Source: RMDB library OK1LIB, as collected in RNAgym. Chemical mapping of a 177-nucleotide RNA with 2A3 and DMS. The reactions ran in a buffer of 150 mM KOAc, 10 mM MgCl2 and 150 mM bicine (pH 8.5), at 24 C. The DMS profile rests on 2,550 reads. For 2A3, 1,695 sequencing reads were counted.
[RMDB]
RNA sequence: GGGAACGACUCGAGUAGAGUCGAAAAUAAAUGCAGGAUGGGAAGCACUUGAAAAACUUCAGCAGCUACAUGUGGCAAUCCUCUCGAAUACACAUAUUACUGAUAGAGACAUAUCCCAUUUCAGCAAUGUUGCGUAUACUUUCGAGUAUACGCAACAAAAAGAAACAACAACAACAAC
Reactivity to 2A3 in 0.01 (KOAc 150mM, MgCl2 10mM, bicine 150mM(pH8.5), 24C), signal-to-noise 3, nucleotides 027 to 126: u080a000a040a020u040g000c020a020g060g040a050u020g000g000g020a040a040g020c030a010c070u060u090g030a000a000a020a100a120c050u130u060c050a020g040c050a000g000c100u120a020c070a080u060g010u030g000g000c030a000a020u000c020c000u030c030u010c060g070a060a000u100a130c010a000c000a040u090a050u120u220a030c020u030g020a020u080a120g070a000g000a000c010a010u090a000u010c000c000c030a000u050u010u150c060a000g010c010a060a090
Reactivity to DMS in 0.01 (KOAc 150mM, MgCl2 10mM, bicine 150mM(pH8.5), 24C), signal-to-noise 2, nucleotides 027 to 126: u030a020a100a100u000g000c060a060g000g000a080u030g000g020g020a050a120g020c040a090c040u000u000g000a040a040a020a060a060c200u000u000c050a080g010c060a030g070c120u010a070c070a080u000g080u010g000g000c140a040a070u000c030c010u000c080u000c110g000a100a070u010a100c040a010c110a030u000a040u000u020a120c110u000g000a120u000a130g000a010g010a100c090a050u010a150u010c000c000c020a130u000u000u020c030a060g070c150a060a090